[RMDB]
RNA sequence: GGGAACGACUCGAGUAGAGUCGAAAAGUCAAUGGGUAACGAUCUAAAAUCGGAUUUUGUGAAAAUUCGGAAAGAAGUUCGGAAGCAUGAAUUCCUUGAGAUGUUAAUUCUUGGUACAAUAAAGGUAGAAUUCGAUAGAAUUCGUUCUAUCGAAUUCAAAAGAAACAACAACAACAAC
Reactivity to 2A3 in 0.01 (KOAc 150mM, MgCl2 10mM, bicine 150mM(pH8.5), 24C), signal-to-noise 3, nucleotides 027 to 126: g050u020c020a030a120u080g020g050g000u060a100a050c020g000a020u010c020u030a040a030a060a080u050c000g000g000a000u000u000u030u130g270u030g070a060a040a050a080u040u020c000g040g040a050a100a100g050a110a010g000u020u030c040g000g060a050a030g030c030a010u050g000a100a070u090u060c000c000u010u100g060a050g010a060u040g080u190u160a070a060u110u030c010u030u020g050g010u080a060c030a030a170u140a260a130a030g110g000u040a030
Reactivity to DMS in 0.01 (KOAc 150mM, MgCl2 10mM, bicine 150mM(pH8.5), 24C), signal-to-noise 8, nucleotides 027 to 126: g010u010c060a080a080u010g010g010g010u000a120a270c030g000a020u000c020u010a060a080a140a060u000c020g010g000a010u000u000u000u010g030u010g000a060a020a020a030u000u010c020g010g000a060a040a080g000a190a080g000u000u000c020g010g010a130a160g000c040a040u000g010a080a140u000u000c010c010u000u010g010a100g000a050u000g010u000u010a060a120u010u000c020u000u000g010g010u000a070c100a040a100u010a030a060a070g010g010u000a120
Structure probing data (2A3 and DMS) for a 177-nucleotide construct. Conditions: 150 mM KOAc, 10 mM MgCl2 and 150 mM bicine (pH 8.5), 24 C. The DMS profile rests on 10,426 reads. The 2A3 profile rests on 2,288 reads. 2A3 adducts were read by reverse transcription with SuperScript II with manganese.